[RMDB]
RNA sequence: GGGAACGACUCGAGUAGAGUCGAAAACGAGUUUGCCUUUCGGCAAACGUCGCAUUAUUAUAUGUGCUUUUUCACUUCGUUGCAAAAGCACGGAAAAAACUUUUUUCGGAAGCUGAGGCUUCCUGCAGGAUCGAUUGGUCUUCGGACCAAUCGAUCCAAAAGAAACAACAACAACAAC
Reactivity to 2A3 in 0.01 (KOAc 150mM, MgCl2 10mM, bicine 150mM(pH8.5), 24C), signal-to-noise 1, nucleotides 027 to 126: c000g000a060g000u000u000u000g000c050c020u260u300u270c150g000g000c020a000a000a000c000g040u060c000g010c060a060u050u070a130u080u000a080u110a100u180g070u000g000c000u010u010u010u010u010c000a000c140u090u100c260g200u300u000g030c000a000a000a000a000g000c000a000c000g010g000a010a010a000a000a000a000c300u170u150u010u020u020u300c030g000g000a000a000g040c000u000g000a070g230g000c000u000u000c000c000u000g040c000a060